[RMDB]
RNA sequence: GGGAACGACUCGAGUAGAGUCGAAAAGACACGACGGAGACGUCGUGUCAAAGAGUGGGAAACCACUCAAAGAGCCACAGCUUCGGCUGUGGCUCAAGGCGUGGCACCGUCCACGGAAAAAACGGAACACGCUAUAAAAUUUCGAUUUUAUAGCGUGAAAAGAAACAACAACAACAAC
Reactivity to 2A3 in 0.01 (KOAc 150mM, MgCl2 10mM, bicine 150mM(pH8.5), 24C), signal-to-noise 3, nucleotides 027 to 126: g000a000c000a000c010g010a000c000g020g000a070g030a070c010g000u000c000g000u000g000u000c000a000a000a000g000a000g000u000g000g000g010a020a050a070c000c000a000c000u010c000a030a040a000g000a000g010c000c000a000c000a000g010c000u090u100c260g130g000c010u010g000u000g000g000c000u000c000a000a000g010g000c000g000u000g000g000c070a020c100c000g100u130c020c010a000c050g010g000a000a020a010a000a000a000c000g000g010a030a000
Reactivity to DMS in 0.01 (KOAc 150mM, MgCl2 10mM, bicine 150mM(pH8.5), 24C), signal-to-noise 4, nucleotides 027 to 126: g010a030c000a000c000g000a010c010g000g010a270g000a230c000g020u000c010g030u000g010u000c000a030a070a090g010a020g020u000g000g000g000a170a110a260c000c000a010c000u000c000a030a070a120g000a020g010c010c010a010c000a000g020c000u010u010c220g040g020c000u010g000u000g010g000c000u000c000a010a030g020g000c020g010u000g000g010c010a150c020c010g000u010c000c010a010c010g010g000a000a010a000a000a000a000c010g010g010a110a300